[RMDB]
RNA sequence: GGGAACGACUCGAGUAGAGUCGAAAACAGUGAGGAGUAGGUGUUAUUAUCUCUCCCUCACCCACGAGGAAGACGCAGCCCGAGCAGGGAGGAAAUGAGCCCGUGGCUUGAGACCAGUGCAGGGAACGCAGAGUCACUGCCCAGCUUGGAAGGACUGUAUGUUCAUGGAUUUCGAUCCAUGAACAUAAAAAGAAACAACAACAACAAC
Reactivity to DMS in 0.01 (KOAc 150mM, MgCl2 10mM, bicine 150mM(pH8.5), 24C), signal-to-noise 3, nucleotides 027 to 156: c060a090g010u010g000a050g080g010a060g030u010a020g030g000u000g000u000u000a120u000u000a050u010c010u000c020u020c020c010c010u000c020a040c020c000c040a170c120g010a090g020g000a040a060g000a080c040g040c050a180g010c010c030c030g010a090g040c080a110g020g020g040a070g000g000a040a040a080u010g010a100g000c000c020c070g040u010g020g010c030u000u000g010a140g000a100c040c000a110g000u000g000c040a100g010g000g020a070a060c040g020c070a150g020a160g000u000c030a060c050u000g010c020c030c020a080g000c060u000u000g010g010a110a090g020g010a060c050u010g030
Reactivity to 2A3 in 0.01 (KOAc 150mM, MgCl2 10mM, bicine 150mM(pH8.5), 24C), signal-to-noise 4, nucleotides 027 to 156: c050a020g010u010g020a010g010g020a040g030u220a030g030g080u060g100u200u170a220u190u070a120u060c040u000c010u050c030c010c000u000c000a010c020c010c010a060c060g020a060g030g050a020a050g050a050c070g020c080a030g050c010c020c010g000a010g020c050a050g000g000g020a030g030g040a060a070a060u100g010a020g030c020c020c040g070u040g050g000c020u070u080g040a040g030a040c010c030a020g000u030g030c020a030g020g010g010a070a030c020g000c070a020g010a020g090u040c030a020c080u080g000c030c000c010a010g000c040u020u020g060g010a040a020g050g030a040c020u050g030
The record gives the reactivity of an RNA of 207 nucleotides to DMS and 2A3. 2A3 adducts were read by reverse transcription with SuperScript II with manganese. It was measured as part of the RMDB library OK3TST.